This 177-nucleotide RNA was probed chemically with DMS. Conditions: 150 mM KOAc, 10 mM MgCl2 and 150 mM bicine (pH 8.5), 24 C.

RNA sequence: GGGAACGACUCGAGUAGAGUCGAAAAGAUAUGGACAAGAGGGAGAAGUCUCGUCCGAACUACUCUGAGACCUCGGAAACGAGGUGUAGGAGCGGACGAGACUUCGUUGAUCUCUUGUCCUAAGUCAGUAUGUCACCAGGUUCGCCUGGUGACAUACAAAAGAAACAACAACAACAAC
Reactivity to DMS in 0.01 (KOAc 150mM, MgCl2 10mM, bicine 150mM(pH8.5), 24C), signal-to-noise 1, nucleotides 027 to 126: g020a030u020a300u000g000g000a000c000a010a000g040a040g020g000g000a020g000a020a000g020u000c030u000c000g000u020c000c010g010a020a050c030u030a300c000u000c020u020g000a260g000a020c000c010u000c000g010g000a060a060a300c000g020a010g000g020u000g000u000a300g000g010a010g010c010g010g000a000c040g000a030g010a000c000u000u010c000g000u010u000g020a030u000c000u000c000u010u020g010u000c000c030u000a000a130g030u000c040a190
The DMS profile rests on 788 reads.